[RMDB]
RNA sequence: GGGAACGACUCGAGUAGAGUCGAAAAUAGAAUAAAGACGUCACAUCUUGCUGGUGUGGUCACUGGGUUCAUUCUGUAUUCCGGCGCAGGUGAUGAACUUGAUUACGAAUUCGUCGGUGCUGAUCAAACCUCGCUAGGACUUCGGUCCUAGCGAGGUAAAAGAAACAACAACAACAAC
Reactivity to 2A3 in 0.01 (KOAc 150mM, MgCl2 10mM, bicine 150mM(pH8.5), 24C), signal-to-noise 1, nucleotides 027 to 126: u000a000g130a060a020u170a040a110a030g100a000c060g060u150c010a000c000a050u050c160u220u100g080c210u060g040g040u000g000u000g040g000u160c010a070c250u030g000g000g210u010u010c000a000u080u020c000u000g010u030a140u280u000c050c050g000g050c070g000c000a000g000g030u080g000a010u020g000a000a000c000u000u150g000a050u130u080a090c080g070a000a160u060u180c000g000u000c000g000g000u000g080c070u000g000a090u090c120a020a020